[RMDB]
RNA sequence: GGGAACGACUCGAGUAGAGUCGAAAAGCAAAGGCUGAAUGACUGUGUCUGUCUUUGGUAUUGAAGAAGGAUUCCUGCAGUAGUAGGAGGUUAUUUCUGGUUUCUAAAGUUUUUUCCAAGCCUAGGAUUCUGUUACAAUACCAGCUAAAAAAUGUAACUGACUGCUUUUAUUCGUAAAAGCAGUCAGAAAAGAAACAACAACAACAAC
Reactivity to 2A3 in 0.01 (KOAc 150mM, MgCl2 10mM, bicine 150mM(pH8.5), 24C), signal-to-noise 1, nucleotides 027 to 156: g000c000a000a000a080g070g000c010u070g050a170a050u080g020a110c080u060g010u020g050u070c020u020g020u000c040u020u080u030g010g000u020a040u030u050g060a060a100g010a030a020g010g010a020u080u000c000c010u030g000c010a040g030u300a060g000u010a010g060g070a000g030g020u080u040a150u020u120u010c050u040g040g000u000u070u000c050u080a060a090a070g000u020u000u000u020u150u020c040c000a050a030g020c010c010u050a030g020g000a010u070u030c010u080g040u100u040a040c000a000a010u020a040c000c000a000g050c040u140a030a140a020a000a040a000u120g010u070a060a030
Reactivity to DMS in 0.01 (KOAc 150mM, MgCl2 10mM, bicine 150mM(pH8.5), 24C), signal-to-noise 2, nucleotides 027 to 156: g020c030a070a110a080g020g030c040u010g020a160a090u010g010a110c110u000g020u000g020u000c030u000g000u020c010u020u010u000g040g030u000a040u010u010g020a090a080g040a130a060g000g000a130u020u000c020c010u010g010c060a250g000u010a100g030u000a040g020g000a080g020g020u000u000a030u010u000u000c000u000g010g020u030u030u000c040u010a060a090a110g010u000u000u000u010u000u000c040c030a050a120g000c020c030u000a090g010g010a070u000u000c040u000g010u000u000a120c040a050a050u010a050c030c010a060g020c070u020a000a010a080a080a040a040u000g010u000a090a190

Structure probing data (2A3 and DMS) for a 207-nucleotide construct.
DMS adducts were read by reverse transcription with MarathonRT.
For DMS, 3,345 sequencing reads were counted.
For 2A3 the reverse transcriptase was SuperScript II with manganese.
For 2A3, 731 sequencing reads were counted.
It was measured as part of the RMDB library OK3TST.